[RMDB]
RNA sequence: GGGAACGACUCGAGUAGAGUCGAAAACAUAUGACGGAGAGUGGAACACUCAGCGGAAACGCAUCCAAUGUCUGAAGUCUUUAAUGGGUAUAACAGUCAGUUGACCCAGAUCCCAACACACAAUAAAUACCCUUAAGAUCUUCGGAUCUUAAGGGUAAAAAGAAACAACAACAACAAC
Reactivity to DMS in 0.01 (KOAc 150mM, MgCl2 10mM, bicine 150mM(pH8.5), 24C), signal-to-noise 3, nucleotides 027 to 126: c040a070u010a060u010g020a020c010g010g000a160g020a090g000u030g000g020a140a220c100a030c040u000c010a190g010c020g010g000a070a050a140c050g030c020a300u010c040c010a110a100u010g020u000c000u010g010a180a100g020u000c030u000u000u020a250a170u000g010g000g030u000a110u010a010a020c030a170g000u000c230a130g000u000u000g000a020c010c020c000a000g000a110u010c010c020c000a090a080c190a050c130a120c140a080a070u010a030a120a130
Reactivity to 2A3 in 0.01 (KOAc 150mM, MgCl2 10mM, bicine 150mM(pH8.5), 24C), signal-to-noise 2, nucleotides 027 to 126: c000a040u150a050u240g020a020c030g000g010a020g010a000g070u060g010g260a200a000c050a010c060u040c010a010g020c000g020g000a040a020a020c020g020c020a020u030c010c030a130a130u170g050u040c030u020g050a090a020g000u000c020u030u090u040a090a080u050g000g040g000u040a170u080a290a020c030a030g300u260c040a030g000u180u000g050a020c000c000c000a000g000a030u020c000c000c040a040a030c090a000c000a000c030a000a120u110a110a080a030